[RMDB]
Chemical mapping of a 207-nucleotide RNA with 2A3 and DMS. The reactions ran in a buffer of 150 mM KOAc, 10 mM MgCl2 and 150 mM bicine (pH 8.5), at 24 C. DMS (dimethyl sulfate) methylates the pairing face of unpaired adenines and cytosines. For 2A3, 2,650 sequencing reads were counted. 2A3 is a SHAPE reagent: it acylates the 2'-hydroxyl of flexible nucleotides of all four kinds.
RNA sequence: GGGAACGACUCGAGUAGAGUCGAAAACCAGCUUGCCUGUGUCCUAGGGAAUUGGAAGGUCAUCCUUCACAGGUUCGUGUGGAAGUCCUGCUCGGGGCGGAAGCAUUAAAACCAUUCGAGCUAGUCAAAAACCGGCUGAUCUUCGGAUCAGCCGGAAGAUUCUAUUCUACUUCGGUAGAAUAGAAUCAAAAGAAACAACAACAACAAC
Reactivity to 2A3 in 0.01 (KOAc 150mM, MgCl2 10mM, bicine 150mM(pH8.5), 24C), signal-to-noise 4, nucleotides 027 to 156: c000c000a000g020c000u020u050g010c000c000u000g010u020g030u130c030c050u090a080g030g030g060a120a130u140u130g060g060a140a080g060g020u150c060a070u080c030c000u050u030c020a020c000a030g000g000u000u040c030g000u120g000u020g040g060a080a040g040u010c000c010u020g050c040u050c070g010g010g020g000c050g020g020a030a000g050c030a020u120u190a030a080a030a060c030c010a040u050u080c010g010a010g010c040u080a030g110u150c090a030a040a030a110a140c000c000g010g020c000u000g000a000u000c000u030u060c190g000g010a000u000c000a000g000c030c000g000g000a000a000
Reactivity to DMS in 0.01 (KOAc 150mM, MgCl2 10mM, bicine 150mM(pH8.5), 24C), signal-to-noise 1, nucleotides 027 to 156: c010c020a090g000c050u000u000g030c020c040u000g030u000g010u010c040c090u010a130g000g030g010a080a070u020u020g040g010a060a070g050g000u010c050a150u000c000c010u000u000c010a060c010a060g000g030u010u010c170g000u010g040u020g000g070a220a220g010u010c000c020u000g010c090u000c060g070g000g000g100c020g030g000a300a130g010c080a070u010u010a060a100a110a050c010c030a120u000u010c050g000a080g010c030u010a080g030u000c040a070a050a030a210a100c000c010g050g030c000u010g020a020u000c000u000u010c280g030g000a010u000c000a000g020c000c010g010g000a000a000

For 2A3 the reverse transcriptase was SuperScript II with manganese. The DMS profile rests on 1,989 reads.